[RMDB]
RNA sequence: GGGAACGACUCGAGUAGAGUCGAAAAGGGGUCUCAGAUUCCCGUAAAACACUGAAUUCAAAUAGUCGCAAACGACGAAACUUACGCUUUAGCCGCUUAAGGCUAGCCGUUGCAGCAGUCGGUCAAUGGGCUGUGUGGCGAAAGCCACCGCAACGUCGCUAUGCCACACGUUCGCGUGUGGCAUAGCAAAAGAAACAACAACAACAAC
Reactivity to 2A3 in 0.01 (KOAc 150mM, MgCl2 10mM, bicine 150mM(pH8.5), 24C), signal-to-noise 1, nucleotides 027 to 156: g180g010g000g000u010c010u000c010a000g090a280u040u220c060c000c110g090u240a110a110a060a000c060a030c120u030g010a120a130u040u000c060a070a080a150u180a210g060u070c040g090c210a120a140a100c120g000a000c000g030a060a010a000c060u080u120a060c090g000c030u130u080u080a030g010c000c000g100c100u170u280a090a000g000g020c000u000a000g000c000c000g000u000u000g000c000a010g000c010a010g000u010c000g060g100u120c070a040a190u190g140g000g070c060u000g000u010g000u000g120g000c010g000a070a000a070g060c000c000a010c000c000g000c000a000a000c000g060u030c000